[RMDB]
RNA sequence: GGGAACGACUCGAGUAGAGUCGAAAAGAUAUGGACAAGAAUAUAGAUGGAGUUAUAACUAUCGCCCUGUAUCGGAAACGAUACAGGGCGACGAAUUAUAUCUCCUUAGAUUUUCUUGUCCUAAGUCGAUCAGAGAAUAGUUCGCUAUUCUCUGAUCAAAAGAAACAACAACAACAAC
Reactivity to 2A3 in 0.01 (KOAc 150mM, MgCl2 10mM, bicine 150mM(pH8.5), 24C), signal-to-noise 1, nucleotides 027 to 126: g050a060u140a060u190g000g000a000c000a000a020g040a030a030u120a030u090a130g120a210u150g020g000a020g010u050u000a020u010a030a070c150u060a020u070c000g000c000c000c000u010g010u000a030u010c020g020g010a170a100a120c070g000a020u000a010c010a000g040g040g000c000g000a020c000g000a000a000u050u010a010u020a020u010c000u010c000c000u000u010a030g000a060u090u030u000u000c000u010u000g010u030c000c000u010a030a000g040u050c100
Reactivity to DMS in 0.01 (KOAc 150mM, MgCl2 10mM, bicine 150mM(pH8.5), 24C), signal-to-noise 2, nucleotides 027 to 126: g010a090u010a290u010g000g010a020c000a010a030g000a040a010u000a020u000a040g000a070u000g000g010a060g000u000u000a000u010a020a020c110u000a300u000c000g030c010c000c000u010g000u000a000u010c000g010g010a160a060a260c010g010a030u000a010c000a000g010g000g040c000g000a000c040g000a010a080u000u000a000u000a010u000c000u000c000c000u010u000a020g010a080u000u000u000u000c000u000u010g010u000c000c000u000a020a070g010u000c100

An RNA of 177 nucleotides, treated with 2A3 and DMS and read out base by base. The DMS profile rests on 2,388 reads. Source: RMDB library TTRINS, as collected in RNAgym. Conditions: 150 mM KOAc, 10 mM MgCl2 and 150 mM bicine (pH 8.5), 24 C. DMS adducts were read by reverse transcription with MarathonRT.